[RMDB]
RNA sequence: GGGAACGACUCGAGUAGAGUCGAAAAGAUAUGGAGCACAAUGAUGCCGAACUACGACGAUCCAUCGGAAACGAUGGUGAGUCGCGGUUGAGUGCUCCUAAGUCAAACAACUAGUUCGCUAGUUGAAGUUUUUAAUAUCCUUCGGGAUAUUAAAAACAAAAGAAACAACAACAACAAC
Reactivity to 2A3 in 0.01 (KOAc 150mM, MgCl2 10mM, bicine 150mM(pH8.5), 24C), signal-to-noise 5, nucleotides 027 to 126: g030a010u090a050u210g010g000a010g020c010a000c020a080a300u300g070a050u210g100c040c010g060a120a090c180u300a110c300g010a000c000g000a020u000c000c000a000u010c000g020g040a080a090a030c020g010a000u000g010g010u010g000a010g000u010c000g000c000g000g000u040u060g070a030g010u010g000c000u000c000c000u000a010a000g010u000c020a070a050a090c000a010a010c010u010a000g040u090u090c300g030c180u000a000g010u000u030g040a060a010
Reactivity to DMS in 0.01 (KOAc 150mM, MgCl2 10mM, bicine 150mM(pH8.5), 24C), signal-to-noise 7, nucleotides 027 to 126: g010a030u000a300u010g010g010a030g020c000a030c020a200a180u000g010a140u010g010c040c030g000a140a100c130u010a290c030g010a020c000g010a300u010c000c000a000u000c010g000g000a150a070a210c000g010a000u000g000g000u000g000a300g000u000c010g000c020g000g000u000u000g000a210g010u000g000c010u000c000c010u000a020a070g000u000c060a120a130a300c030a000a010c000u000a010g010u000u010c270g030c000u000a010g010u000u000g010a120a130

An RNA of 177 nucleotides, treated with 2A3 and DMS and read out base by base. DMS adducts were read by reverse transcription with MarathonRT.